[RMDB]
RNA sequence: GGGAACGACUCGAGUAGAGUCGAAAAGCGAAAGUUGCCAUGAGACUGUAACUUUCGUAGUCAUUGAUAAAGGGGCAGGUCUCGCUCUUUUGUCAUUGCGGUUGCCUAGAGGCAUGGUCGUUUACCGAAAAGAGCUCAUUCUUCGGAAUGAGCUCAAUCUUUAUCCUCAGUUCGCUGAGGAUAAAGAAAAAGAAACAACAACAACAAC
Reactivity to DMS in 0.01 (KOAc 150mM, MgCl2 10mM, bicine 150mM(pH8.5), 24C), signal-to-noise 2, nucleotides 027 to 156: g000c010g000a000a050a010g030u000u000g000c030c100a300u010g010a190g030a110c120u020g000u010a020a020c010u000u010u010c020g010u010a040g010u000c070a030u010u010g010a030u000a000a040a000g020g010g000g030c020a150g020g020u000c150u020c090g070c010u000c010u000u000u010u000g020u000c030a070u000u000g010c030g020g020u000u000g030c000c060u010a150g020a180g030g000c040a050u000g040g000u000c020g040u000u000u000a070c030c020g010a100a050a150a190g010a020g000c000u000c000a030u000u010c000u000u000c280g040g020a020a000u000g010a010g000c010u000c000a010a020